[RMDB]
RNA sequence: GGGAACGACUCGAGUAGAGUCGAAAACUAUGCAGAUUCGUCUGCAUAGAGACGCGAUGAAGCGGCACUUACACAGCUUCAUACACGUAAGAAGUGCAAUAAAGGGACGAGGGUUCGCCCUCGUCAAACACUUCCUACGGUUCGCCGUAGGAAGUGUAAAAGAAACAACAACAACAAC
Reactivity to DMS in 0.01 (KOAc 150mM, MgCl2 10mM, bicine 150mM(pH8.5), 24C), signal-to-noise 3, nucleotides 027 to 126: c000u000a010u000g010c000a020g010a050u000u020c260g020u000c000u000g000c000a000u000a010g000a100g020a110c050g030c080g020a030u000g010a030a020g020c010g050g010c090a090c080u010u000a110c220a130c160a120g010c000u000u010c000a040u000a150c050a080c020g010u000a050a070g010a060a020g030u010g000c040a160a080u020a060a060a140g000g000g000a000c010g010a020g000g000g010u010u010c250g020c010c000c010u000c000g000u000c020a010a070
Reactivity to 2A3 in 0.01 (KOAc 150mM, MgCl2 10mM, bicine 150mM(pH8.5), 24C), signal-to-noise 2, nucleotides 027 to 126: c000u010a010u000g000c000a000g010a050u040u090c120g100u000c070u000g000c010a010u000a010g000a030g000a000c050g000c020g050a060u000g000a010a010g000c030g000g040c070a010c030u110u160a030c100a020c010a110g000c020u040u000c000a000u060a060c080a000c000g000u050a010a060g040a110a030g060u000g010c040a020a100u200a210a140a040g250g100g000a010c010g000a000g000g000g040u040u040c140g130c000c000c030u000c000g000u000c000a000a000

Chemical mapping of a 177-nucleotide RNA with DMS and 2A3.
DMS adducts were read by reverse transcription with MarathonRT.
High DMS reactivity at an A or C suggests that its Watson-Crick edge is free.
The data come from the RNA Mapping Database (RMDB), library M2PK50.
The DMS profile rests on 1,957 reads.